[RMDB]
RNA sequence: GGGAACGACUCGAGUAGAGUCGAAAACUCAUAGUGGUCAUUUCUUUAUCAAUACUAUCACUAAUCUUUUCAAAUUCUGAUGUUUCCGGAGAAGUCUUAUCAGAAGUCUCUGCAAAAGUUGGAUGGAAAAUAAUGCUAGGUUCGCCUAGCAUUAUUUAAAAGAAACAACAACAACAAC
Reactivity to DMS in 0.01 (KOAc 150mM, MgCl2 10mM, bicine 150mM(pH8.5), 24C), signal-to-noise 4, nucleotides 027 to 126: c010u000c030a150u010a050g010u000g010g020u010c150a100u000u000u000c080u010u010u010a110u030c100a070a090u010a120c110u000a020u000c020a010c040u020a050a100u010c040u010u000u000u000c060a070a100a080u000u020c020u000g010a030u010g000u000u000u000c300c040g000g020a070g000a060a060g010u000c000u000u010a080u010c140a030g000a040a040g000u000c030u000c030u000g010c220a030a020a030a080g000u000u000g010g000a040u000g020g000a100
Reactivity to 2A3 in 0.01 (KOAc 150mM, MgCl2 10mM, bicine 150mM(pH8.5), 24C), signal-to-noise 2, nucleotides 027 to 126: c030u020c010a010u070a050g030u030g020g020u030c030a050u040u180u000c100u080u280u100a230u220c030a100a050u000a180c030u070a050u050c000a010c010u040a080a120u080c030u070u070u070u040c050a050a120a240u030u010c030u030g020a020u030g010u060u020u090c050c000g060g020a050g070a030a010g070u010c010u040u170a120u160c010a030g000a030a010g020u040c030u020c010u020g080c050a060a000a040a070g030u080u060g040g000a010u050g040g020a060
The record gives the reactivity of an RNA of 177 nucleotides to DMS and 2A3. For DMS the reverse transcriptase was MarathonRT. It was measured as part of the RMDB library OK2TST. 2A3 adducts were read by reverse transcription with SuperScript II with manganese. The RNA was probed in 150 mM KOAc, 10 mM MgCl2 and 150 mM bicine (pH 8.5) at 24 C.